[RMDB]
About this RNA
An RNA of 177 nucleotides, treated with DMS and read out base by base. Reactivities are rounded to 0.1 and cut off at 0 and 3. Reactivities are given for positions 27 through 126. The RNA was probed in 150 mM KOAc, 10 mM MgCl2 and 150 mM bicine (pH 8.5) at 24 C.

RNA sequence: GGGAACGACUCGAGUAGAGUCGAAAAUCGAGGGACGAUGAACGGUUCUCUAAACGUUGCAUGCACCUUCAGAAAUGGGUGAUUGAUAAGCAGGUGUCUGCUUAUUCAUCCAUGUCGCGUAGGGUUACGUAGCUCAAGGCUUCGGCCUUGAGCUACGAAAAGAAACAACAACAACAAC
Reactivity to DMS in 0.01 (KOAc 150mM, MgCl2 10mM, bicine 150mM(pH8.5), 24C), signal-to-noise 1, nucleotides 027 to 126: u050c070g010a120g030g040g010a140c070g000a060u000g010a040a060c050g000g000u000u000c200u030c140u010a070a060a120c030g020u000u000g000c060a030u010g020c140a070c000c000u000u000c040a130g010a030a040a040u000g000g000g020u000g000a240u010u040g000a070u000a000a040g020c000a010g010g010u020g000u020c000u000g020c000u000u000a020u000u000c000a000u000c010c000a000u000g010u000c040g010c170g020u030a020g000g020g000u000u000a130